[RMDB]
RNA sequence: GGGAACGACUCGAGUAGAGUCGAAAAUGGGACUAGUCCACCAGAUCUUAAGGACAUCAUCGAGUUUUAUGAGAUUAAAAUUAGAAAAGACUCUAAUGGAAUCCUAGGCUUUUGCAAUGCUCAUAGCCUUCUAUAAUGGCUUCGGCCAUUAUAGAAGAAAAGAAACAACAACAACAAC
Reactivity to 2A3 in 0.01 (KOAc 150mM, MgCl2 10mM, bicine 150mM(pH8.5), 24C), signal-to-noise 2, nucleotides 027 to 126: u030g010g000g050a010c060u010a020g040u000c020c000a020c000c020a080g030a110u070c040u070u080a090a050g000g020a020c000a040u020c000a060u080c050g030a040g050u000u010u040u150a110u070g050a090g050a060u030u150a000a130a150a140u110u110a030g050a050a210a070a020g070a030c050u010c020u130a070a020u100g070g050a040a070u000c040c040u050a080g070g000c010u110u030u010u110g060c010a110a120u150g010c000u040c050a060u120a020g050c000
Reactivity to DMS in 0.01 (KOAc 150mM, MgCl2 10mM, bicine 150mM(pH8.5), 24C), signal-to-noise 2, nucleotides 027 to 126: u000g010g020g010a090c030u000a150g010u010c030c120a110c070c040a100g010a080u000c030u000u000a100a090g000g000a030c070a040u000c100a130u000c130g010a070g000u000u000u000u000a080u010g000a120g010a060u000u000a030a060a060a110u010u000a080g000a090a140a070a100g000a070c110u000c020u000a020a040u010g000g010a120a110u010c020c040u000a050g000g020c030u000u010u000u010g020c090a080a060u000g020c020u010c020a040u010a080g000c100